[RMDB]
RNA sequence: GGGAACGACUCGAGUAGAGUCGAAAAGAUAUGGACAGCCGCCAGUGAAAUACGAACUACCGUUUGUAUCGGAAACGAUACAUACGGCGGAGGCUGUCCUAAGUCAAAACGCCACUUCGGUGGCGAACUAAAAUACGCACUUCGGUGCGUAUUUUAGAAAAGAAACAACAACAACAAC
Reactivity to 2A3 in 0.01 (KOAc 150mM, MgCl2 10mM, bicine 150mM(pH8.5), 24C), signal-to-noise 1, nucleotides 027 to 126: g010a010u000a010u010g000g010a000c000a020g010c000c030g050c040c010a000g090u120g230a130a230a070u300a200c180g080a180a070c060u070a050c070c020g010u000u060u000g020u020a010u010c000g070g000a010a010a000c000g000a010u000a020c000a000u040a000c000g010g010c040g020g000a000g010g010c000u000g030u000c000c000u020a000a000g000u000c000a040a010a140a120c050g000c010c010a000c000u050u120c290g130g000u000g000g000c010g010a000a000
Reactivity to DMS in 0.01 (KOAc 150mM, MgCl2 10mM, bicine 150mM(pH8.5), 24C), signal-to-noise 1, nucleotides 027 to 126: g010a000u000a070u000g010g020a010c010a000g040c000c000g010c010c050a150g020u020g010a090a120a110u010a120c230g020a080a140c130u000a300c020c010g010u000u010u030g000u000a010u000c000g050g010a000a040a030c000g010a000u010a020c000a000u000a000c000g010g000c180g010g000a060g000g000c010u000g000u000c000c000u020a000a030g000u000c000a090a040a050a170c020g020c010c000a020c000u000u020c180g030g030u000g020g010c010g000a000a060